[RMDB]
RNA sequence: GGGAACGACUCGAGUAGAGUCGAAAAUAUCCCACUCGGCGCUAUUUUAUAUCCGUGUAUGGCGUUGGUGGGACCGGCAUGCACUGCCAUGCCGGGCGGUGCAGGAAGGCCUAGCGUCGGCUAGUCAAGUCUCACGACGAUUCGUCGUUGUGGGGCUAAAAGAAACAACAACAACAAC
Reactivity to DMS in 0.01 (KOAc 150mM, MgCl2 10mM, bicine 150mM(pH8.5), 24C), signal-to-noise 9, nucleotides 027 to 126: u020a130u000c000c000c000a020c020u040c030g020g000c000g010c000u000a000u010u020u030u030a080u030a100u050c130c130g010u010g020u020a030u000g000g010c010g020u010u000g000g020u000g000g000g000a050c040c020g000g000c030a050u000g000c020a110c100u010g010c050c000a030u010g010c070c060g000g000g000c030g000g010u010g000c030a050g000g000a130a100g000g010c090c010u000a050g000c050g010u020c100g000g000c040u000a040g000u020c100a130
Reactivity to 2A3 in 0.01 (KOAc 150mM, MgCl2 10mM, bicine 150mM(pH8.5), 24C), signal-to-noise 9, nucleotides 027 to 126: u120a030u020c000c000c000a000c030u130c020g010g000c000g000c000u000a020u030u130u030u060a150u040a040u070c030c050g050u050g030u050a020u030g020g000c000g000u000u030g020g000u010g000g000g010a010c000c010g010g020c010a010u010g000c030a030c160u100g000c030c000a020u030g000c000c000g000g000g000c000g010g000u020g000c010a010g010g030a070a020g050g020c000c010u020a010g010c000g060u050c020g040g000c000u010a010g030u030c040a030